[RMDB]
RNA sequence: GGGAACGACUCGAGUAGAGUCGAAAAGGUCUUUGCUUAGUGACACCUCUUUAUACUUUGGAAGCUAAGGUUACUAAAAUGACCAUAAUUGAUGAAAUAAUAAUUGAAAAAUAGAUAUUUGGCUUCUUGUCUUGCUCUGGGAGCGUAAGGUAAACUGCCGUGUGUCUAAGUUCGCUUAGACACACGGAAAAGAAACAACAACAACAAC
Reactivity to 2A3 in 0.01 (KOAc 150mM, MgCl2 10mM, bicine 150mM(pH8.5), 24C), signal-to-noise 1, nucleotides 027 to 156: g060g000u000c020u010u060u060g060c000u040u050a000g000u020g020a030c000a040c040c020u120c030u170u140u080a260u150a190c110u080u110u170g010g020a010a000g000c050u070a030a000g040g000u000u060a030c030u120a060a010a140a140u090g000a000c020c000a030u150a130a030u060u070g000a020u100g000a040a030a020u200a050a040u050a050a050u300u010g040a030a150a100a050a000u090a050g040a020u010a180u190u180u050g030g000c000u010u010c000u020u010g000u010c040u020u010g020c010u010c040u070g010g000g010a080g000c000g000u010a010a010g010g030u040a120a090a000c020u100g000